Background: This 177-nucleotide RNA was probed chemically with DMS and 2A3. The reactions ran in a buffer of 150 mM KOAc, 10 mM MgCl2 and 150 mM bicine (pH 8.5), at 24 C. Values cover nucleotides 27 to 126.

[RMDB]
RNA sequence: GGGAACGACUCGAGUAGAGUCGAAAAACGUCGUCCGCCACCAAAUCACCAUCGCAACUUCCACAACAUCUUCCUGAACACCGAAAGCAAAGUGGACGGGGAGAACUACAACAAGACCGCGGAGACGGGGCUUUUAAUACUUCGGUAUUAAAAGCCCAAAAGAAACAACAACAACAAC
Reactivity to DMS in 0.01 (KOAc 150mM, MgCl2 10mM, bicine 150mM(pH8.5), 24C), signal-to-noise 2, nucleotides 027 to 126: a160c030g000u000c020g040u000c010c020g020c030c030a180c060c000a060a000a060u110c040a110c070c020a020u060c000g030c060a010a100c070u000u000c000c040a000c030a080a120c180a040u030c000u000u000c000c000u000g020a030a110c010a030c050c070g010a080a080a130g030c300a040a070a150g000u010g010g040a300c030g000g010g000g000a000g000a000a050c130u070a060c110a060a110c170a030a000g000a040c100c060g000c040g030g020a060g000a030c130g000
Reactivity to 2A3 in 0.01 (KOAc 150mM, MgCl2 10mM, bicine 150mM(pH8.5), 24C), signal-to-noise 3, nucleotides 027 to 126: a000c010g060u060c030g110u000c000c010g000c030c000a060c030c000a010a040a100u090c030a040c110c030a050u060c040g010c030a010a010c040u050u010c010c010a100c010a110a050c030a120u010c000u020u000c000c000u010g020a020a000c010a010c030c050g170a200a130a020g190c100a090a030a000g040u010g020g010a010c010g000g000g000g000a000g000a020a030c040u170a050c010a110a000c020a040a000g090a030c030c000g010c010g010g000a020g010a010c010g010